[RMDB]
RNA sequence: GGGAACGACUCGAGUAGAGUCGAAAACAUUAAACAUUCUGAGAACAUCUGCACCGGUUUCCAAGGCUUCUCCCUCACUAAUUGCUUUGAUUAUUGUGUGAAGUUAAGAACUGGCACAUUUCCGCGAAGUCAUUAGGACAUUCGUGUCCUAAUGACUAAAAGAAACAACAACAACAAC
Reactivity to DMS in 0.01 (KOAc 150mM, MgCl2 10mM, bicine 150mM(pH8.5), 24C), signal-to-noise 4, nucleotides 027 to 126: c070a090u030u030a050a060a100c110a060u030u010c040u010g020a120g010a090a080c080a050u020c030u000g020c030a070c070c030g000g020u000u010u000c010c040a080a090g000g020c030u000u000c010u000c020c020c010u000c050a030c110u030a030a080u000u010g010c060u000u000u000g010a110u010u000a070u030u020g010u010g010u000g000a130a060g010u000u010a100a100g000a050a060c030u010g010g010c030a030c040a030u000u010u020c010c020g010c200g000a080
Reactivity to 2A3 in 0.01 (KOAc 150mM, MgCl2 10mM, bicine 150mM(pH8.5), 24C), signal-to-noise 7, nucleotides 027 to 126: c060a040u170u190a080a100a010c040a080u120u060c030u100g060a050g030a120a040c020a080u030c030u060g000c010a010c020c010g030g030u020u090u010c020c030a050a040g060g000c020u050u000c010u030c010c010c000u040c010a050c030u050a070a050u040u090g030c020u070u050u100g060a060u030u200a070u100u070g020u000g010u010g140a100a030g010u020u040a060a020g040a070a010c010u010g050g010c010a000c000a020u020u040u000c010c010g080c040g040a020
The record gives the reactivity of an RNA of 177 nucleotides to DMS and 2A3. The reactions ran in a buffer of 150 mM KOAc, 10 mM MgCl2 and 150 mM bicine (pH 8.5), at 24 C. DMS adducts were read by reverse transcription with MarathonRT. 2A3 adducts were read by reverse transcription with SuperScript II with manganese.